[RMDB]
This 177-nucleotide RNA was probed chemically with 2A3 and DMS. Reactivities are rounded to 0.1 and cut off at 0 and 3. Conditions: 150 mM KOAc, 10 mM MgCl2 and 150 mM bicine (pH 8.5), 24 C. The data come from the RNA Mapping Database (RMDB), library M2PK50. The 2A3 profile rests on 1,280 reads. Values cover nucleotides 27 to 126. For DMS the reverse transcriptase was MarathonRT.
RNA sequence: GGGAACGACUCGAGUAGAGUCGAAAACCCGUUCAUUUCGAUGAACGGGAGUGGGUAACCCUAGGACCAGUAGUGGCACCCGUAGUGGCCGUGGGACCAGUAAAGAGUUAACAUUCGUGUUAACUAAGAUCAUACAACCGUUCGCGGUUGUAUGAUCAAAAGAAACAACAACAACAAC
Reactivity to 2A3 in 0.01 (KOAc 150mM, MgCl2 10mM, bicine 150mM(pH8.5), 24C), signal-to-noise 2, nucleotides 027 to 126: c010c000c010g030u000u000c000a010u000u050u120c240g160a050u020g000a020a000c000g020g030g000a030g040u150g030g040g060u070a110a130c010c020c000u020a060g050g120a130c020c030a040g030u090a020g010u190g040g030c070a080c000c000c050g040u070a050g080u040g070g000c030c010g000u110g020g000g040a110c010c020a020g030u090a030a100a040g180a030g020u000u000a000a000c020a000u050u110c220g060u030g000u040u000a000a000c000u010a020a080
Reactivity to DMS in 0.01 (KOAc 150mM, MgCl2 10mM, bicine 150mM(pH8.5), 24C), signal-to-noise 2, nucleotides 027 to 126: c000c000c000g000u010u000c000a000u000u010u000c160g020a030u020g000a010a000c000g000g000g000a050g010u010g010g000g000u010a100a190c010c010c010u020a150g000g000a120c050c040a100g000u000a080g020u000g010g000c060a090c040c040c050g020u010a040g010u000g000g000c030c000g010u000g010g010g010a100c040c030a100g020u020a060a090a100g000a030g010u000u000a010a010c000a060u010u000c200g010u000g000u000u000a000a010c000u000a040a050